[RMDB]
RNA sequence: GGGAACGACUCGAGUAGAGUCGAAAAGGCGCUGAUUCGUCAGCGCCAAAAAGAUAUGGAUCCAUGAUGCGGGAGCUGUAUGUCGGAAACGACAUAGAUCAGCAUCGAUCGCAUCCGCUGGAUCCUAAGUCAAAAAAGUUCGCGUUCGCGCGAACAACACAGAAGUUGGUUUCGACCAACUUCUGUGAAAAGAAACAACAACAACAAC
Reactivity to 2A3 in 0.01 (KOAc 150mM, MgCl2 10mM, bicine 150mM(pH8.5), 24C), signal-to-noise 1, nucleotides 027 to 156: g000g000c030g000c010u020g020a070u060u080c160g080u010c130a010g000c000g010c000c000a000a000a000a000a010g040a030u050a020u040g000g000a000u010c010c010a020u130g000a000u000g010c000g020g000g000a010g000c000u040g000u050a000u030g000u020c000g010g050a070a040a020c010g010a000c000a000u020a020g160a240u170c000a000g000c000a120u240c030g040a040u060c000g000c000a000u000c000c000g000c000u000g000g010a000u000c000c000u000a000a000g010u010c040a000a000a060a070a060a080g010u020u000c040g000c030g030u010u060c250g000c030g000c010g130a000a000c000a020a020